[RMDB]
RNA sequence: GGGAACGACUCGAGUAGAGUCGAAAAACGAGAUGGGCUGAUAGAGACAUGAAGAGAACACGUGCAUAACUGGAAACAGUAGCUUGUAGGGCAUGCAGACGCAAGUAGAAAGCACGUUCAAGAUUUGGCGCAGAAGGUAAUUCGUUACCUUCUGCGCAAAAGAAACAACAACAACAAC
Reactivity to DMS in 0.01 (KOAc 150mM, MgCl2 10mM, bicine 150mM(pH8.5), 24C), signal-to-noise 2, nucleotides 027 to 126: a090c070g010a110g020a010u000g000g040g000c060u080g040a090u000a120g040a120g000a120c030a040u000g000a090a020g000a100g010a130a110c180a040c030g020u010g000c000a060u000a110a000c010u020g010g000a200a110a030c000a040g020u000a210g000c030u000u030g000u000a120g000g000g000c000a000u000g000c020a090g000a190c140g000c010a000a010g000u000a020g000a040a040a120g000c010a000c020g000u000u060c130a040a090g000a140u010u000u000g010
Reactivity to 2A3 in 0.01 (KOAc 150mM, MgCl2 10mM, bicine 150mM(pH8.5), 24C), signal-to-noise 2, nucleotides 027 to 126: a020c100g030a000g010a030u120g040g020g000c030u030g000a120u060a080g060a000g010a010c010a020u070g000a040a090g170a000g000a060a000c040a000c040g000u010g000c020a040u090a270a030c000u000g000g000a010a000a000c010a000g060u080a000g020c000u000u030g000u110a130g050g050g000c000a080u140g020c060a100g020a060c070g000c000a000a000g010u050a030g070a020a060a000g020c010a000c000g000u000u020c000a000a000g020a050u020u010u100g010